[RMDB]
RNA sequence: GGGAACGACUCGAGUAGAGUCGAAAAUCUGAGAACAUCUGCACCGGUUUCCAAGGCUUCUCCCUCACUAAUUGCUUUGAUUAUUGUGUGAAGUUAAGAACUGGCACAUUUCCGCGAUGUUGUGAUGUUAAGCCUCAGUUUUCGAACUGAGGCUUAAAAAAGAAACAACAACAACAAC
Reactivity to 2A3 in 0.01 (KOAc 150mM, MgCl2 10mM, bicine 150mM(pH8.5), 24C), signal-to-noise 3, nucleotides 027 to 126: u060c020u050g060a050g070a110a010c020a160u020c000u020g010c020a050c020c060g000g050u000u030u000c030c020a020a060g070g000c000u070u080c000u030c000c010c000u010c000a060c020u130a070a050u040u040g010c010u100u060u260g080a020u070u180a110u140u030g010u000g020u000g150a050a030g000u000u110a070a030g050a100a020c030u020g050g000c000a000c000a000u110u110u000c030c010g010c000g020a010u020g010u100u000g000u000g020a060u050g020
Reactivity to DMS in 0.01 (KOAc 150mM, MgCl2 10mM, bicine 150mM(pH8.5), 24C), signal-to-noise 2, nucleotides 027 to 126: u010c040u010g010a100g000a120a050c080a040u010c010u000g020c060a070c040c040g020g000u000u000u000c020c070a050a130g000g000c030u000u020c050u000c020c030c040u000c040a040c070u000a020a060u010u010g010c050u000u000u010g000a030u010u010a060u020u000g020u000g010u000g000a120a060g000u020u010a080a050g010a080a090c020u010g010g040c060a020c040a070u010u000u000c010c030g040c080g000a090u000g020u020u000g000u010g000a090u030g050

Structure probing data (2A3 and DMS) for a 177-nucleotide construct.
The RNA was probed in 150 mM KOAc, 10 mM MgCl2 and 150 mM bicine (pH 8.5) at 24 C.
As a SHAPE reagent, 2A3 marks flexible, mostly unpaired nucleotides at the ribose 2'-OH.
Source: RMDB libraries RFM100 and RFMREP, as collected in RNAgym.